[RMDB]
RNA sequence: GGGAACGACUCGAGUAGAGUCGAAAAAAUGUUUGAUGUGGCCACAGCUGUGUAUAUGUUGACAGUUUUUCAUCCUGAAACUAGGAAUGCUGAACUUCCACGCAUUUUAGUUGAUCACGCAAGCCAACUCGACACGGUAAUUCGUUACCGUGUCGAGAAAAGAAACAACAACAACAAC
Reactivity to DMS in 0.01 (KOAc 150mM, MgCl2 10mM, bicine 150mM(pH8.5), 24C), signal-to-noise 1, nucleotides 027 to 126: a070a050u000g000u010u010u000g020a030u020g020u000g000g010c070c050a040c060a110g000c050u000g050u020g000u020a070u000a070u010g000u000u000g010a020c070a040g010u000u000u000u000u000c030a130u000c040c050u000g030a130a040a060c110u010a040g000g000a040a020u000g000c020u010g000a030a050c150u000u000c090c110a050c090g020c020a020u000u000u000u000a000g020u000u000g030a070u010c050a050c120g000c130a020a060g000c070c090a050a110